Chemical mapping of a 177-nucleotide RNA with DMS and 2A3. It was measured as part of the RMDB library RFM100. DMS adducts were read by reverse transcription with MarathonRT. Values cover nucleotides 27 to 126.

RNA sequence: GGGAACGACUCGAGUAGAGUCGAAAAACCGAUAAAAACAUAUCGAUUGUUUUUAUACGAUACCGCGAACUCAUUCCAACGGGGAGCGGUAUGACAAAACUCAUCCUGCCGGCGCCAUUCCGACGGCUUCGUUUAGCCUCUUCGGAGGCUAAACGAAAAAAGAAACAACAACAACAAC
Reactivity to DMS in 0.01 (KOAc 150mM, MgCl2 10mM, bicine 150mM(pH8.5), 24C), signal-to-noise 2, nucleotides 027 to 126: a040c140c040g000a000u010a000a010a000a000a000c010a020u000a300u070c300g000a120u030u000g000u000u000u000u000u000a030u010a220c170g000a080u000a070c030c000g000c060g000a300a300c000u060c100a040u010u170c230c190a030a110c300g000g000g000g010a300g020c010g000g010u000a010u000g000a030c160a150a050a050a050c080u000c160a080u000c020c010u030g000c100c000g010g000c020g010c120c030a080u020u000c080c000g000a020c200g000g000c070
Reactivity to 2A3 in 0.01 (KOAc 150mM, MgCl2 10mM, bicine 150mM(pH8.5), 24C), signal-to-noise 3, nucleotides 027 to 126: a000c010c010g000a000u010a010a000a000a000a000c050a060u140a150u140c140g200a160u100u040g000u010u010u000u000u010a030u000a020c010g020a030u010a000c010c010g010c000g100a240a050c020u030c020a080u300u200c050c020a090a020c160g000g010g010g020a010g010c000g000g010u010a010u010g000a010c000a000a020a020a110c040u030c050a070u060c020c020u030g020c000c020g030g000c010g010c060c030a060u160u110c040c000g010a020c030g040g000c010